RNA sequence: GGGAACGACUCGAGUAGAGUCGAAAAUUGCCGAUCAGGCUGUGUUGUGGCGGGGGCGAAACAGGAUCGACAAGGGUGUAAAGAUCGCUCUUUUACUCGGCAUGAUACCACCGUUAUCGGGGCAACAAAAAGAAUAUGUGGUUCGCCACAUAUUCAACGUAUUACUGUGGUUCGCCACAGUAAUACGAAAAGAAACAACAACAACAAC
Reactivity to 2A3 in 0.01 (KOAc 150mM, MgCl2 10mM, bicine 150mM(pH8.5), 24C), signal-to-noise 3, nucleotides 027 to 156: u100u040g030c010c000g020a100u090c090a050g030g000c000u030g010u000g000u010u080g030u020g060g070c030g010g000g010g000g010c050g040a010a010a000c080a060g000g090a070u030c020g030a040c050a050a050g100g010g000u070g040u120a090a150a010g060a060u050c010g020c010u030c000u030u110u030u050a060c010u000c010g020g000c030a020u060g010a000u060a050c020c030a030c010c010g060u090u030a050u120c030g010g010g040g000c020a060a030c000a040a110a030a010a000g010a000a000u010a000u000g000u000g000g050u030u020c230g060c040c000a000c000a000u010a000u000u000c000a020a000
Reactivity to DMS in 0.01 (KOAc 150mM, MgCl2 10mM, bicine 150mM(pH8.5), 24C), signal-to-noise 3, nucleotides 027 to 156: u000u010g020c010c030g030a100u000c110a140g030g030c070u020g030u000g030u000u010g020u000g000g010c050g020g000g010g000g000c060g010a080a030a110c040a100g000g030a110u010c000g010a050c050a070a060g010g020g040u000g030u000a050a130a150g000a090u000c070g020c010u000c020u000u000u000u000a080c050u000c010g000g030c020a140u000g010a170u000a060c040c050a040c030c010g000u000u000a080u010c060g000g040g010g000c060a070a080c050a040a080a060a050a130g000a020a020u010a010u000g020u000g010g000u000u000c300g010c020c000a020c000a020u000a010u000u020c010a020a100